[RMDB]
RNA sequence: GGGAACGACUCGAGUAGAGUCGAAAACUUGGUGGCCUGGAUGUGAAAGUAACCGCUUUCCUCCAGCAGCUCCAGCCAUUUUUCCCACACGGGGAAGUGAUGAUCCACAAAGAAUCUGGACGGCAAGUACUUCUCCGGGAAGAAGCUGCCGUAGAUAAUCCGUAAAUUUAUUCGUAAAUUUACGGAUAAAAGAAACAACAACAACAAC
Reactivity to DMS in 0.01 (KOAc 150mM, MgCl2 10mM, bicine 150mM(pH8.5), 24C), signal-to-noise 1, nucleotides 027 to 156: c040u010u010g000g000u000g000g040c120c050u000g000g010a060u030g010u050g020a060a040a050g010u000a160a270c160c190g010c010u000u000u000c010c010u000c000c010a050g020c130a080g000c050u010c020c040a120g020c000c010a080u000u000u000u000u000c040c000c010a120c110a070c070g020g000g000g010a050a080g020u000g010a090u000g000a210u000c030c020a090c120a110a230a150g000a040a080u020c040u010g000g010a060c010g000g030c000a100a100g010u030a070c020u010u010c000u000c040c070g020g000g010a100a110g000a050a160g000c030u000g000c010c010g000u000a070g020a160u020a120
Reactivity to 2A3 in 0.01 (KOAc 150mM, MgCl2 10mM, bicine 150mM(pH8.5), 24C), signal-to-noise 2, nucleotides 027 to 156: c040u060u040g010g010u070g020g000c010c000u010g010g000a070u040g190u080g070a000a000a000g030u110a140a190c070c130g000c000u000u000u010c000c000u000c010c000a020g000c040a010g000c010u030c030c020a020g010c020c000a070u090u090u000u030u010c020c030c000a050c000a010c010g020g000g000g010a000a030g030u020g030a110u060g010a050u040c050c000a080c080a040a150a040g160a140a040u170c060u050g080g030a020c010g020g000c010a070a050g040u040a060c000u000u000c000u000c010c030g020g010g010a190a110g020a050a000g050c060u050g000c010c000g050u030a010g040a110u230a120